[RMDB]
RNA sequence: GGGAACGACUCGAGUAGAGUCGAAAACUCUCUAGCUUCCCAGUGAGAAGCGAGAGAAAACUGGCUCUCCCUUAACCAUCCGAGUGGACGUAUGUCCUCCUUCGGAUGCCCAGGUCGGACCGCGAGGGAGACCUAUAUGGUUCGCCAUAUAGGUCUCAAAAGAAACAACAACAACAAC
Reactivity to DMS in 0.01 (KOAc 150mM, MgCl2 10mM, bicine 150mM(pH8.5), 24C), signal-to-noise 9, nucleotides 027 to 126: c130u000c000u000c000u000a130g000c000u000u000c000c020c110a200g010u010g000a100g000a010a010g010c010g000a020g000a010g000a020a020a070a100c160u010g010g010c020u000c020u000c030c020c030u000u010a080a090c300c010a020u000c000c000g000a040g010u000g000g000a020c010g010u000a050u020g010u000c000c000u000c100c110u000u000c010g010g000a010u000g010c070c060c070a130g000g010u000c030g010g000a240c020c010g010c140g010a120g010g010
Reactivity to 2A3 in 0.01 (KOAc 150mM, MgCl2 10mM, bicine 150mM(pH8.5), 24C), signal-to-noise 9, nucleotides 027 to 126: c000u000c000u000c030u050a040g000c000u010u010c010c030c110a160g170u190g170a300g010a070a000g000c010g000a000g000a000g000a030a060a000a020c070u050g010g000c000u000c000u020c040c020c000u040u090a040a030c020c000a000u000c000c000g000a010g010u020g000g010a000c030g280u300a120u300g010u010c010c000u020c020c060u090u060c000g000g000a000u000g000c000c010c010a040g010g000u010c010g000g010a020c000c010g080c060g140a120g060g160